[RMDB]
RNA sequence: GGGAACGACUCGAGUAGAGUCGAAAAGUUAGAGCAAUAAUUCUAGUAUCCGAAUUAGUCUUAUCCCUUGGCUCGCUCUAACGUUAUUACUCCCUAAUACUCCCUUUAACCGCAUCCCCCUGGUGCGCUGAGAUAAGGUUUUCGAACCUUAUCUCAGAAAAGAAACAACAACAACAAC
Reactivity to 2A3 in 0.01 (KOAc 150mM, MgCl2 10mM, bicine 150mM(pH8.5), 24C), signal-to-noise 9, nucleotides 027 to 126: g010u010u010a010g000a000g010c030a080a100u040a090a020u070u000c020u050a090g090u140a260u110c100c050g010a020a010u030u010a040g020u010c020u060u120a120u120c020c010c000u000u040g030g000c030u040c110g000c000u000c000u000a010a000c000g010u010u010a070u030u100a080c060u050c010c010c000u010a070a040u040a100c040u070c010c010c000u050u080u100a070a030c030c020g020c020a030u030c010c010c010c000c030u020g010g030u030g010c030g000
Reactivity to DMS in 0.01 (KOAc 150mM, MgCl2 10mM, bicine 150mM(pH8.5), 24C), signal-to-noise 7, nucleotides 027 to 126: g000u000u000a000g000a010g020c010a210a190u020a040a030u010u000c000u000a270g010u010a090u020c200c130g010a030a030u010u010a030g010u010c030u010u010a090u000c030c030c020u010u000g010g010c030u010c150g010c010u000c010u010a010a020c020g010u020u020a060u020u020a120c140u000c010c010c010u010a070a060u020a060c080u000c010c000c030u010u010u010a080a080c150c040g010c030a060u000c020c060c020c020c050u010g000g010u000g000c090g010